[RMDB]
RNA sequence: GGGAACGACUCGAGUAGAGUCGAAAAUAGGGUUGGACUUCUACAAAAGUUUGAAGACUUCCCUCGAGAGGAAAAACAUACUGCAGAGUUUUCUCGAAGACCUCACCGCGGAGGUAUCCAACAUUAAUGAUCACGUAGGAUUCGUCCUACGUGAUCAAAAAGAAACAACAACAACAAC
Reactivity to DMS in 0.01 (KOAc 150mM, MgCl2 10mM, bicine 150mM(pH8.5), 24C), signal-to-noise 2, nucleotides 027 to 126: u020a020g000g020g000u010u000g000g000a190c020u010u010c000u010a040c080a180a190a070a200g010u020u010u000g000a030a000g000a120c100u000u000c000c000c000u000c010g030a150g010a000g000g000a050a090a080a100a080c100a130u020a050c150u010g000c150a100g000a050g020u000u010u020u000c000u010c000g000a050a120g000a090c000c020u000c020a030c110c060g050c150g030g000a050g000g000u010a060u040c050c010a060a050c060a130u040u010a050a150
Reactivity to 2A3 in 0.01 (KOAc 150mM, MgCl2 10mM, bicine 150mM(pH8.5), 24C), signal-to-noise 4, nucleotides 027 to 126: u160a010g020g000g000u000u000g000g060a130c000u000u000c010u030a080c050a090a300a070a050g050u110u130u140g010a010a000g000a020c030u040u010c000c030c000u000c000g100a080g000a010g010g140a020a080a000a080a030c050a070u230a080c040u100g100c070a050g030a040g110u000u010u050u000c000u010c000g020a070a000g060a030c000c010u010c000a050c020c100g060c060g160g040a000g000g000u050a020u040c010c010a040a050c030a080u110u230a140a090

The record gives the reactivity of an RNA of 177 nucleotides to DMS and 2A3. Conditions: 150 mM KOAc, 10 mM MgCl2 and 150 mM bicine (pH 8.5), 24 C. The data come from the RNA Mapping Database (RMDB), library OK1LIB. The DMS profile rests on 2,315 reads. For 2A3, 2,098 sequencing reads were counted. 2A3 adducts were read by reverse transcription with SuperScript II with manganese.